[RMDB]
RNA sequence: GGGAACGACUCGAGUAGAGUCGAAAAGACAACGGACGCUGGGUUGAAGUACUCCGUACAGGGAGCGUACUGAAGCGCGCACGGUACGCGAAGAACUGUACGAGAGUACCAACCUGUGCUGAAGCGCGCACGGCAACCGAAAGGUGCGAAGCCCUAACAUUAACCUUCCGUUCGCGGAAGGUUAAUGAAAAGAAACAACAACAACAAC
Reactivity to DMS in 0.01 (KOAc 150mM, MgCl2 10mM, bicine 150mM(pH8.5), 24C), signal-to-noise 1, nucleotides 027 to 156: g000a190c010a080a150c010g000g060a160c040g040c010u000g010g000g020u020u010g000a200a300g000u000a020c010u000c010c000g000u030a050c020a070g020g000g000a080g030c000g000u000a070c010u000g010a090a050g010c020g000c000g000c030a300c000g000g020u000a000c010g030c020g020a150a110g000a040a300c020u030g030u000a010c020g030a100g010a030g010u000a010c010c000a000a030c030c030u000g000u000g010c010u010g010a130a080g000c010g010c010g000c030a300c060g000g000c020a010a070c010c010g000a120a080a120g000g000u000g000c000g000a130a050g030c020c030c010u030a070a200
Reactivity to 2A3 in 0.01 (KOAc 150mM, MgCl2 10mM, bicine 150mM(pH8.5), 24C), signal-to-noise 3, nucleotides 027 to 156: g070a050c060a130a050c090g160g090a010c030g040c020u030g020g010g000u000u000g050a300a050g010u010a000c000u000c000c000g000u000a000c000a000g000g010g000a000g010c000g000u000a000c010u030g040a160a080g000c000g010c000g000c020a000c010g000g030u010a000c000g000c020g060a110a020g000a000a010c020u030g010u040a000c000g030a070g000a000g200u000a000c000c000a000a000c000c000u000g000u000g000c000u010g020a120a040g000c000g000c000g030c020a030c020g000g000c010a000a000c000c020g070a100a020a050g040g000u030g020c000g030a080a030g050c000c000c010u040a100a020

Chemical mapping of a 207-nucleotide RNA with DMS and 2A3. It was measured as part of the RMDB library RNAMAK. For DMS the reverse transcriptase was MarathonRT.